About this RNA: Structure probing data (DMS and 2A3) for a 207-nucleotide construct. For DMS, 1,981 sequencing reads were counted. It was measured as part of the RMDB library RNAMAK. For 2A3 the reverse transcriptase was SuperScript II with manganese. Conditions: 150 mM KOAc, 10 mM MgCl2 and 150 mM bicine (pH 8.5), 24 C.
[RMDB]
RNA sequence: GGGAACGACUCGAGUAGAGUCGAAAAUCUGAAUUCGUUCAGAGCCUUGGAUAUGGACGGAUAGAGAGGUGUGACGAAUUAAGCUCGGAAACGAGCUUAACUAUCACACUCCCCACCUCUAUACCGUCCUAAGUCUCACAUUUGUCUUCGGACAAAAACAAACCGUGUAUUUCGAUACACGGUUUGUAAAAGAAACAACAACAACAAC
Reactivity to DMS in 0.01 (KOAc 150mM, MgCl2 10mM, bicine 150mM(pH8.5), 24C), signal-to-noise 1, nucleotides 027 to 156: u010c000u010g000a010a050u010u000c230g040u000u010c030a000g050a050g000c080c060u020u020g010g010a160u000a120u010g000g000a020c040g030g000a120u010a010g000a020g000a260g010g010u000g040u000g000a030c030g010a030a070u000u000a000a010g000c000u010c010g000g000a060a150a230c000g010a010g010c020u000u000a000a000c040u010a090u010c030a020c000a030c070u000c300c050c020c070a300c130c010u000c010u000a010u000a140c000c010g030u000c000c000u000a020a040g000u010c030u010c040a090c110a150u010u000u000g010u000c000u000u030c240g030g030a030c020a010a010a030a170
Reactivity to 2A3 in 0.01 (KOAc 150mM, MgCl2 10mM, bicine 150mM(pH8.5), 24C), signal-to-noise 2, nucleotides 027 to 156: u030c010u010g010a000a010u100u120c220g060u170u010c010a010g000a050g060c010c020u050u120g020g000a030u020a030u050g000g000a000c000g000g000a000u000a000g010a000g010a020g000g010u010g000u000g020a060c130g090a090a070u000u000a000a000g000c000u010c000g000g010a010a010a010c000g010a000g050c010u000u000a000a000c000u010a000u010c000a010c000a000c020u030c040c000c000c010a020c000c000u000c010u020a040u080a300c000c000g000u000c000c000u000a000a000g000u000c000u050c040a170c050a220u030u060u030g010u000c010u020u070c260g120g000a020c020a030a020a010a000